[RMDB]
RNA sequence: GGGAACGACUCGAGUAGAGUCGAAAACAGCCGCUGCAGGGCUGGAUAGCACUGGAGAGCAACGAGAAGCUGCGGCUGCGCAUCGUGGAGUGGGUGCAGGAGCAGGGCAUCAACUUCUCCCUCCUCGUGAUUACCGAACGUUCGCGUUCGGUAAUCAAAAAGAAACAACAACAACAAC
Reactivity to 2A3 in 0.01 (KOAc 150mM, MgCl2 10mM, bicine 150mM(pH8.5), 24C), signal-to-noise 1, nucleotides 027 to 126: c010a000g020c010c000g050c100u130g050c030a050g040g000g000c020u020g000g110a120u270a080g050c070a040c100u060g070g050a150g050a010g080c030a040a130c060g010a030g010a100a030g010c020u020g010c030g060g050c000u020g010c050g010c020a070u050c040g120u160g010g080a060g030u110g030g040g010u030g000c040a040g070g070a020g030c050a060g010g110g000c000a020u010c010a020a050c000u030u050c000u030c020c020c020u050c000c000u010c040g090
Reactivity to DMS in 0.01 (KOAc 150mM, MgCl2 10mM, bicine 150mM(pH8.5), 24C), signal-to-noise 2, nucleotides 027 to 126: c000a050g000c000c010g010c040u010g010c010a070g010g000g010c020u010g000g000a090u030a060g030c010a040c030u020g000g000a100g030a120g020c070a120a080c130g020a110g000a100a100g000c030u000g010c020g000g000c020u010g010c040g000c060a100u000c090g010u020g010g010a070g000u010g000g030g030u000g000c040a070g010g000a170g000c100a070g000g010g050c070a060u000c020a040a080c030u000u000c030u000c010c010c010u000c010c000u000c100g030
Overview
This 177-nucleotide RNA was probed chemically with 2A3 and DMS. The reactions ran in a buffer of 150 mM KOAc, 10 mM MgCl2 and 150 mM bicine (pH 8.5), at 24 C. DMS adducts were read by reverse transcription with MarathonRT. The 2A3 profile rests on 1,473 reads. The data come from the RNA Mapping Database (RMDB), library OK2TRN. The DMS profile rests on 1,507 reads.